Conditions: 150 mM KOAc, 10 mM MgCl2 and 150 mM bicine (pH 8.5), 24 C. The record gives the reactivity of an RNA of 177 nucleotides to 2A3 and DMS. The data come from the RNA Mapping Database (RMDB), library OK2TST.
RNA sequence: GGGAACGACUCGAGUAGAGUCGAAAAAACAGAGGGAUCAACAGGGUAAAAGAGAACCACUCCACAACACGGUGUUUUCCUGUUGAAUAGCUCAGAAUUCAGAAAGUGAAAACCCAAACAAAUGAUGCAGACUGUACGUAUUCGUACGUACAGUCUGAAAAGAAACAACAACAACAAC
Reactivity to 2A3 in 0.01 (KOAc 150mM, MgCl2 10mM, bicine 150mM(pH8.5), 24C), signal-to-noise 3, nucleotides 027 to 126: a000a000c080a050g010a020g010g070g060a050u010c010a000a020c010a010g000g000g090u140a120a070a040a040g120a040g040a010a000c030c030a050c050u070c020c040a090c050a180a110c080a070c150g020g000u010g020u040u120u050u080c000c010u000g000u000u000g000a010a010u010a010g000c000u000c030a010g090a010a010u080u100c030a030g180a250a270a010g090u060g060a020a000a040a040c010c010c060a000a070a010c040a010a140a080u240g100a090u190g100
Reactivity to DMS in 0.01 (KOAc 150mM, MgCl2 10mM, bicine 150mM(pH8.5), 24C), signal-to-noise 3, nucleotides 027 to 126: a080a040c100a060g000a090g000g020g030a100u000c010a010a020c020a020g000g010g000u000a010a070a090a160g010a180g020a140a060c090c040a050c040u000c100c090a080c150a030a060c210a120c180g000g030u010g000u000u000u000u000c010c000u000g000u010u000g000a020a010u000a270g000c010u010c050a020g020a060a140u000u000c030a060g000a090a080a060g010u020g010a020a010a030a120c000c000c000a080a100a090c240a070a090a080u000g000a140u000g010